[RMDB]
RNA sequence: GGGAACGACUCGAGUAGAGUCGAAAAGCUCCUAUGGACACAUUACUUGGAGCGAAGGUUUGUGUGGAUGAUUUUAACAACCAAUUCUAUAGUCUCAACUUAGAGUGUCCAUGGACUGUGGGGAUGAAACCCUCCCCUGUUUCGACAGGGGAGGGUUAAAAGAAACAACAACAACAAC
Reactivity to DMS in 0.01 (KOAc 150mM, MgCl2 10mM, bicine 150mM(pH8.5), 24C), signal-to-noise 1, nucleotides 027 to 126: g000c140u000c000c000u010a010u000g000g020a010c010a010c060a090u000u000a040c040u000u010g000g010a070g010c040g000a110a050g000g010u010u000u000g000u000g010u040g000g010a190u040g000a190u000u000u100u000a120a180c170a180a030c010c000a030a030u030u000c020u000a020u000a300g000u040c000u090c050a090a030c100u010u000a000g000a160g000u000g030u000c000c000a000u000g070g000a050c090u010g100u000g000g010g000g010a050u070g030a120
Reactivity to 2A3 in 0.01 (KOAc 150mM, MgCl2 10mM, bicine 150mM(pH8.5), 24C), signal-to-noise 1, nucleotides 027 to 126: g000c050u000c090c000u000a010u060g000g000a000c000a000c000a080u010u010a110c000u180u040g000g080a000g000c010g000a040a040g000g010u010u160u040g000u000g000u130g020g070a230u110g230a260u300u230u250u300a240a010c000a000a010c000c000a000a000u150u110c000u000a050u000a130g100u000c000u000c000a130a180c050u000u200a000g090a000g210u000g000u000c000c000a000u020g000g000a000c000u120g000u160g140g000g000g000a000u020g010a140

The record gives the reactivity of an RNA of 177 nucleotides to DMS and 2A3. For DMS, 1,306 sequencing reads were counted. The reactions ran in a buffer of 150 mM KOAc, 10 mM MgCl2 and 150 mM bicine (pH 8.5), at 24 C.